[RMDB]
RNA sequence: GGGAACGACUCGAGUAGAGUCGAAAACCCUGGUUAUUCGUAACCAGGGGUUGAGAGAAUCCUCUCAGUGCAUCGGUGGAUCACACGAAACGCAUGGACGACAAUUACGGUUAUUCGUAACCGUAAACGCAUCCUGUAAGUUCGCUUACAGGAUGCGAAAAGAAACAACAACAACAAC
Reactivity to 2A3 in 0.01 (KOAc 150mM, MgCl2 10mM, bicine 150mM(pH8.5), 24C), signal-to-noise 2, nucleotides 027 to 126: c000c000c000u000g000g010u020u010a040u040u050c270g030u030a010a000c000c000a010g010g020g020g000u050u200g030a060g000a010g020a060a200u000c020c010u000c020u010c020a020g030u040g010c020a060u020c060g170g000u100g050g140a130u150c040a030c000a010c140g030a030a090a010c070g000c010a020u050g050g070a020c030g030a030c040a050a060u070u010a010c000g010g020u000u000a030u010u070c100g000u010a010a000c000c000g000u010a000a010a010
Reactivity to DMS in 0.01 (KOAc 150mM, MgCl2 10mM, bicine 150mM(pH8.5), 24C), signal-to-noise 3, nucleotides 027 to 126: c000c000c000u010g010g000u000u000a020u000u010c200g030u010a000a000c010c000a000g000g010g010g020u020u010g000a050g010a070g000a080a040u060c010c000u010c020u000c000a090g010u000g000c050a040u000c040g020g000u010g000g030a140u030c090a080c060a080c040g000a050a100a110c080g000c030a020u010g000g020a070c070g000a060c070a100a170u010u000a010c010g000g000u000u010a010u000u020c190g010u010a020a010c000c000g010u000a000a030a120
Annotation:
The record gives the reactivity of an RNA of 177 nucleotides to 2A3 and DMS. The reactions ran in a buffer of 150 mM KOAc, 10 mM MgCl2 and 150 mM bicine (pH 8.5), at 24 C. For DMS the reverse transcriptase was MarathonRT. The 2A3 profile rests on 3,087 reads. It was measured as part of the RMDB library M2PK50.